[RMDB]
RNA sequence: GGGAACGACUCGAGUAGAGUCGAAAAAGCAACGAGUGUGUGUGCGACGUUUUAUCCCAAGCUCUGAGUAGAGCACGCGCUCACACACACCGCGAGCGAGCAUCAGCAGAGCGCAAACGCUGGUAAAGCUAUGGUCAAAGUUCGCUUUGACCAUAGCAAAAGAAACAACAACAACAAC
Reactivity to 2A3 in 0.01 (KOAc 150mM, MgCl2 10mM, bicine 150mM(pH8.5), 24C), signal-to-noise 4, nucleotides 027 to 126: a020g110c080a060a040c070g070a110g060u000g010u000g000u000g000u010g020c010g030a100c020g180u020u020u100u220a130u040c000c010c020a030a010g010c010u000c000u070g300a260g150u250a020g230a000g000c010a000c020g040c000g000c000u000c000a000c010a000c000a000c000a010c000c000g020c000g020a020g010c020g000a020g020c000a070u060c030a020g060c020a020g040a050g100c030g000c040a080a090a050c030g000c060u070g030g020u080a090a050a010
Reactivity to DMS in 0.01 (KOAc 150mM, MgCl2 10mM, bicine 150mM(pH8.5), 24C), signal-to-noise 4, nucleotides 027 to 126: a090g030c080a120a070c080g010a160g000u010g010u000g010u000g020u000g020c040g010a080c010g000u000u010u010u010a120u000c000c020c010a080a110g010c000u000c000u000g000a160g010u000a060g010a020g020c010a110c070g010c030g010c020u030c000a020c000a000c010a030c010a060c040c050g010c020g000a130g010c080g010a080g010c070a060u000c060a030g010c030a120g010a110g010c060g010c120a050a160a160c110g020c010u000g010g010u000a030a070a120